[RMDB]
RNA sequence: GGGAACGACUCGAGUAGAGUCGAAAACGAAAUUGCGCUUUCAGGCGUUGCUGCGGAUGGAACUCCUAUUGCCCAGAUCCAAUUGACUGAAGAUGCUCAGCGCAACUUUCUCACGAAGUCUGUACUUACAAUCAAAGGCUUCGACGAGUCCGCCUGACGGAGAUGUACCAUUCGUGGUACAUCUCCGAAAAGAAACAACAACAACAAC
Reactivity to DMS in 0.01 (KOAc 150mM, MgCl2 10mM, bicine 150mM(pH8.5), 24C), signal-to-noise 1, nucleotides 027 to 156: c100g000a100a080a060u010u000g010c000g000c000u000u010u000c000a120g040g020c090g020u000u000g000c000u000g030c040g000g000a230u000g010g000a050a120c000u000c040c030u010a120u000u000g000c030c010c050a200g000a080u020c030c080a110a070u000u010g010a100c050u000g000a100a090g000a140u000g010c100u000c100a150g010c000g020c010a010a030c050u000u000u010c000u000c040a240c090g010a000a010g030u000c030u020g000u000a110c120u010u000a100c210a100a200u000c070a120a190a030g030g010c000u000u000c000g010a030c040g000a060g010u010c060c040g050c080c030u040g000a300
Reactivity to 2A3 in 0.01 (KOAc 150mM, MgCl2 10mM, bicine 150mM(pH8.5), 24C), signal-to-noise 2, nucleotides 027 to 156: c060g050a050a090a040u040u030g000c000g000c020u040u000u120c070a040g010g000c040g000u040u070g010c000u030g040c090g000g050a050u070g050g070a100a090c040u020c040c080u140a180u000u150g040c030c000c000a010g000a090u020c030c000a060a210u170u020g080a150c030u020g020a060a050g060a110u140g000c060u050c200a000g010c000g020c040a000a000c050u020u060u030c010u020c010a050c000g010a000a000g040u000c010u070g000u110a120c010u220u120a090c260a120a160u260c080a140a060a000g050g000c020u020u010c030g020a050c050g000a000g020u000c030c030g010c040c010u040g010a040